[RMDB]
RNA sequence: GGGAACGACUCGAGUAGAGUCGAAAAGUAAUGCAGUGACUUGUAUAGUCCAGAGGUGGGCUGAGAGAAAAUGCCAUCCUAGGAAACAGGGUUAUUCUUCUUGUGGGUAACUCUGUGCCGAAGGCUGUCUACAUUGCUGUUUCGACAGCAAUGUAGAAAAAGAAACAACAACAACAAC
Reactivity to DMS in 0.01 (KOAc 150mM, MgCl2 10mM, bicine 150mM(pH8.5), 24C), signal-to-noise 9, nucleotides 027 to 126: g020u030a060a080u020g010c040a040g010u010g010a140c040u010u000g010u030a130u030a030g010u000c000c010a050g010a170g010g020u000g010g010g010c020u000g010a190g000a070g000a070a070a070a060u010g010c040c020a080u010c000c010u000a210g000g000a030a070a020c000a000g000g000g000u000u000a000u000u010c000u020u040c280u040u030g010u040g000g000g000u000a000a010c000u000c010u000g000u000g000c010c000g000a090a120g000g000c140u010g010
Reactivity to 2A3 in 0.01 (KOAc 150mM, MgCl2 10mM, bicine 150mM(pH8.5), 24C), signal-to-noise 9, nucleotides 027 to 126: g090u090a050a100u130g020c030a030g060u030g140a040c020u040u050g040u150a090u170a100g010u000c010c010a030g030a050g190g220u110g010g020g000c020u060g010a020g000a000g020a080a100a050a040u070g010c010c000a040u030c010c010u020a030g040g000a030a250a000c000a000g030g000g000u000u000a010u020u020c020u160u060c040u130u240g120u240g050g000g000u010a000a000c000u000c000u010g000u000g000c000c000g010a040a010g020g000c010u020g020